[RMDB]
RNA sequence: GGGAACGACUCGAGUAGAGUCGAAAAGCAAAGCUCAAGAAUUACGACGUCGUCGUCAACGGCCUCCGGACAACCGUCCAGUACAGCGACGAGGACGCGAAGCGCCUCGGCCUGACCGGCAAGGACACCGGCUCCGCCGCCGCCAAACGCAAGGCCGAUUAAACUCUAGUUUCGACUAGAGUUUAAUAAAAGAAACAACAACAACAAC
Reactivity to DMS in 0.01 (KOAc 150mM, MgCl2 10mM, bicine 150mM(pH8.5), 24C), signal-to-noise 2, nucleotides 027 to 156: g050c060a060a080a160g010c030u010c030a080a090g020a160a190u000u010a090c020g020a080c030g020u000c020g020u000c010g000u000c030a070a060c030g020g000c010c020u000c080c050g010g050a120c070a110a060c120c060g000u020c010c060a070g000u000a100c050a070g000c050g000a040c020g000a040g030g000a060c010g010c010g000a120a120g040c040g000c040c040u000c030g030g040c000c000u010g000a040c060c000g000g000c020a100a110g010g020a070c050a290c070c020g000g000c020u000c040c050g040c050c040g010c030c030g020c020c040a070a050a110c060g010c040a040a030g000g040c000c010g000
Reactivity to 2A3 in 0.01 (KOAc 150mM, MgCl2 10mM, bicine 150mM(pH8.5), 24C), signal-to-noise 4, nucleotides 027 to 156: g050c040a060a080a030g030c020u060c130a060a110g100a180a220u220u170a120c160g030a070c020g100u050c020g160u000c000g000u030c030a030a030c020g020g000c000c010u110c110c070g020g000a040c030a120a220c110c150g000u010c010c000a010g000u110a300c000a010g010c000g020a010c010g000a010g020g010a010c000g020c010g070a060a000g020c030g020c020c000u040c000g000g020c000c010u030g000a080c000c050g000g040c060a070a090g070g010a010c020a070c080c060g110g010c090u030c030c060g070c050c020g020c050c010g020c030c050a150a110a030c070g020c060a040a020g000g000c000c000g000